Chemical mapping of a 177-nucleotide RNA with DMS and 2A3. The 2A3 profile rests on 2,613 reads. Values cover nucleotides 27 to 126. The DMS profile rests on 2,344 reads. Source: RMDB library VIROID, as collected in RNAgym.
[RMDB]
RNA sequence: GGGAACGACUCGAGUAGAGUCGAAAACAAGGGCUAACCACCCUCGCCCCGAAGCAAGUAAGAUAGAGAAAAAGCGGUUCUCGGGAGCUUCAGUUGUUUCCACCGGGUAGUAGCCGAAGCGACAGCGGGUACAUAUGAAGUUCGCUUCAUAUGUACCAAAAGAAACAACAACAACAAC
Reactivity to DMS in 0.01 (KOAc 150mM, MgCl2 10mM, bicine 150mM(pH8.5), 24C), signal-to-noise 3, nucleotides 027 to 126: c140a090a030g010g000g010c000u000a110a070c090c140a300c020c000c010u000c040g020c060c010c000c080g010a100a080g000c060a070a060g020u020a070a080g020a090u020a070g010a070g000a010a080a090a150a100g010c080g030g010u000u000c030u000c040g010g010g000a110g000c010u000u010c070a050g000u000u000g000u000u000u000c010c020a140c130c060g000g000g000u000a060g010u000a060g000c020c010g020a070a060g020c040g000a050c130a070g020c070g000
Reactivity to 2A3 in 0.01 (KOAc 150mM, MgCl2 10mM, bicine 150mM(pH8.5), 24C), signal-to-noise 2, nucleotides 027 to 126: c010a010a020g000g000g000c010u000a000a020c010c010a020c000c010c000u000c030g060c000c010c000c000g060a050a010g040c090a030a070g030u160a140a030g080a230u250a060g100a030g070a060a080a040a060a010g120c040g080g010u070u020c030u040c010g060g020g010a060g010c010u100u070c040a020g020u050u050g020u040u050u030c030c040a080c000c050g110g010g000u070a090g020u020a020g090c000c000g020a020a000g000c020g040a030c040a060g040c090g040